[RMDB]
RNA sequence: GGGAACGACUCGAGUAGAGUCGAAAAAUUACAGCUAUGCAUCAAGAAGAGUGGCUAUGUAUGAAACAGGUAUUUUCAGAUUAAACAGCUUGUUUAAAUGAUGAGGAAGUGGAGUGUACUUUUCCUCGCACGUAAACGACUUCGGUCGUUUACGUGCAAAAGAAACAACAACAACAAC
Reactivity to 2A3 in 0.01 (KOAc 150mM, MgCl2 10mM, bicine 150mM(pH8.5), 24C), signal-to-noise 1, nucleotides 027 to 126: a000u210u100a040c030a000g000c000u030a010u080g020c010a060u040c030a100a010g110a100a020g040a050g040u030g020g000c020u020a000u170g080u070a070u090g120a000a000a150c050a000g080g040u000a040u030u140u110u090c030a040g090a180u010u280a100a040a010c000a040g140c020u140u050g020u010u030u080a030a080a130u040g020a050u110g020a000g040g060a060a000g000u020g030g120a070g120u130g050u090a130c010u050u030u000u060c010c010u000c040
Reactivity to DMS in 0.01 (KOAc 150mM, MgCl2 10mM, bicine 150mM(pH8.5), 24C), signal-to-noise 1, nucleotides 027 to 126: a080u010u000a110c090a070g000c020u000a040u000g000c060a100u030c030a070a100g050a060a130g000a140g010u000g010g000c020u020a020u000g010u020a130u010g030a080a020a060c130a060g020g010u010a060u010u000u010u010c060a060g000a070u000u010a020a080a020c060a100g010c120u000u010g030u010u000u000a020a070a070u010g000a080u020g000a040g020g020a070a050g010u000g000g000a090g010u010g020u000a080c040u010u010u000u000c010c010u000c200